[RMDB]
Source: RMDB library M2PK50, as collected in RNAgym. Structure probing data (DMS and 2A3) for a 177-nucleotide construct. The DMS profile rests on 4,817 reads. For DMS the reverse transcriptase was MarathonRT. The RNA was probed in 150 mM KOAc, 10 mM MgCl2 and 150 mM bicine (pH 8.5) at 24 C. DMS (dimethyl sulfate) methylates the pairing face of unpaired adenines and cytosines.
RNA sequence: GGGAACGACUCGAGUAGAGUCGAAAACGGAUCAACUUCGGUUGAUCCGAAAGGGACGGGUCGGGAGGGGGAUACUCGCGGUCCCUAGAAGAAUCCAGACUGAAAGGAAGGUCUUCGGACCUUCCAACCACAUAAUGAAGUUCGCUUCAUUAUGUGGAAAAGAAACAACAACAACAAC
Reactivity to DMS in 0.01 (KOAc 150mM, MgCl2 10mM, bicine 150mM(pH8.5), 24C), signal-to-noise 4, nucleotides 027 to 126: c010g010g000a010u000c010a010a010c000u010u000c190g030g000u000u000g010a000u000c000c000g000a000a030a110g010g010g010a100c110g000g020g040u010c090g010g010g000a160g000g000g000g010g000a050u010a020c060u000c060g030c070g000g010u000c000c010c010u000a060g000a080a090g000a070a100u020c050c040a090g000a090c120u010g000a070a100a120g000g000a020a000g010g010u000c000u000u010c190g020g000a010c010c000u000u000c000c000a020a060
Reactivity to 2A3 in 0.01 (KOAc 150mM, MgCl2 10mM, bicine 150mM(pH8.5), 24C), signal-to-noise 5, nucleotides 027 to 126: c010g000g000a000u000c000a010a020c010u040u030c130g100g000u000u010g000a000u000c000c000g000a020a010a000g020g010g150a060c100g020g030g150u250c090g030g030g060a160g030g030g000g020g010a010u060a110c020u020c020g050c030g030g020u030c010c000c000u030a040g040a100a010g030a020a040u050c020c010a040g090a140c070u110g080a100a060a050g000g000a000a000g010g000u000c000u020u040c130g020g000a010c000c000u000u000c000c000a000a000